[RMDB]
RNA sequence: GGGAACGACUCGAGUAGAGUCGAAAAGAUAUGGAAUAAAUCUACAGGGAGGCAGCCAUUCGGAAACGAAUGUCUGCCUUUGAUCUGUAGAGUUUAUUCCUAAGUCAAAGCUGGCUUCGGCCAGCAAGAUAAUACUAACCUUCGGGUUAGUAUUAUCAAAAGAAACAACAACAACAAC
Reactivity to DMS in 0.01 (KOAc 150mM, MgCl2 10mM, bicine 150mM(pH8.5), 24C), signal-to-noise 4, nucleotides 027 to 126: g000a040u010a300u020g000g000a010a010u000a010a040a050u000c000u000a000c000a010g010g000g000a010g010g030c000a000g000c040c000a000u010u000c000g010g010a140a080a190c010g000a020a010u000g000u000c000u000g010c000c000u000u000u000g000a030u010c000u000g010u000a010g000a040g000u000u000u000a000u000u000c000c000u000a030a100g010u000c030a130a130a180g020c010u000g000g020c000u000u020c240g020g010c000c010a010g030c010a010a030

This 177-nucleotide RNA was probed chemically with DMS.